[RMDB]
An RNA of 207 nucleotides, treated with DMS and 2A3 and read out base by base.
RNA sequence: GGGAACGACUCGAGUAGAGUCGAAAAAUCCUUUUCUUCGGAAAAGGAUAAAAAAGAUAUGGAAAGUGUCAGGCAUCGAUCGUACUGCAUCGGAAACGAUGUUACGGGAGCCUGACCUUUCCUAAGUCAAAAACCCGCGCUAUUCGUAGCGCGGGAAUACAAGAUACCUAUUCGUAGGUAUCUUGUAAAAAGAAACAACAACAACAAC
Reactivity to DMS in 0.01 (KOAc 150mM, MgCl2 10mM, bicine 150mM(pH8.5), 24C), signal-to-noise 2, nucleotides 027 to 156: a070u000c000c000u000u010u000u000c000u000u000c300g030g000a010a010a000a030g030g010a000u010a000a030a100a070a080a100g020a030u000a060u010g000g000a040a010a030g010u010g010u000c000a010g020g030c000a300u010c140g000a030u010c000g000u000a020c300u000g000c000a000u000c000g040g020a030a040a030c010g040a020u000g000u000u000a020c010g000g000g000a050g020c000c000u000g000a000c000c000u000u000u000c010c000u010a000a050g000u020c010a070a100a050a120a140c010c000c000g030c010g070c000u000a040u000u000c220g020u000a030g000c000g050c000g000g010g010a000a000
Reactivity to 2A3 in 0.01 (KOAc 150mM, MgCl2 10mM, bicine 150mM(pH8.5), 24C), signal-to-noise 3, nucleotides 027 to 156: a000u000c010c000u000u000u000u000c010u030u040c160g130g000a010a000a000a000g000g010a000u050a000a010a000a000a000a010g010a000u010a000u040g000g000a000a000a000g020u050g000u030c010a010g000g000c000a060u300c270g010a000u000c000g010u000a000c080u060g020c010a000u000c000g010g000a010a010a000c000g000a000u000g000u030u010a000c010g000g000g000a010g000c000c000u000g000a000c000c000u000u000u000c000c000u000a000a000g000u000c010a020a010a060a150a130c020c010c010g000c010g010c010u040a050u120u100c170g130u040a010g000c000g000c010g000g000g000a000a000